RNA sequence: GGGAACGACUCGAGUAGAGUCGAAAAACGGACGUUACGACGUCCGAACCCGAUGAUGCCAACAGGGUAGCUGCCGAGGCGAUGAGGAAGCCGUUCCAGACUGAGGAGCGCCAGUACGCUGGCGCAAUCUGACAUUUUCGUUCGCGAAAAUGUCAGAAAAAGAAACAACAACAACAAC
Reactivity to DMS in 0.01 (KOAc 150mM, MgCl2 10mM, bicine 150mM(pH8.5), 24C), signal-to-noise 1, nucleotides 027 to 126: a040c000g000g030a000c000g050u010u010a010c190g030a070c000g000u020c000c010g010a030a000c010c000c010g000a000u010g070a060u000g000c060c020a160a170c170a050g010g000g000u000a150g010c020u070g050c030c020g050a170g010g000c010g000a040u000g010a060g000g000a080a080g040c020c030g070u000u000c020c000a100g010a130c060u000g000a000g040g000a220g010c010g000c000c000a010g030u000a060c250g020c000u000g010g050c000g020c010a000a000
Reactivity to 2A3 in 0.01 (KOAc 150mM, MgCl2 10mM, bicine 150mM(pH8.5), 24C), signal-to-noise 2, nucleotides 027 to 126: a010c020g000g010a000c000g000u020u040a120c300g050a000c000g010u000c000c000g000a000a000c050c000c000g000a200u180g010a030u050g040c040c010a030a050c030a150g030g060g060u030a030g030c040u070g000c010c020g060a060g040g000c060g000a090u050g020a030g110g000a080a000g010c030c040g030u000u010c010c000a060g000a130c040u110g060a070g050g030a090g000c000g000c000c000a000g010u030a020c280g020c120u000g000g000c000g000c000a010a040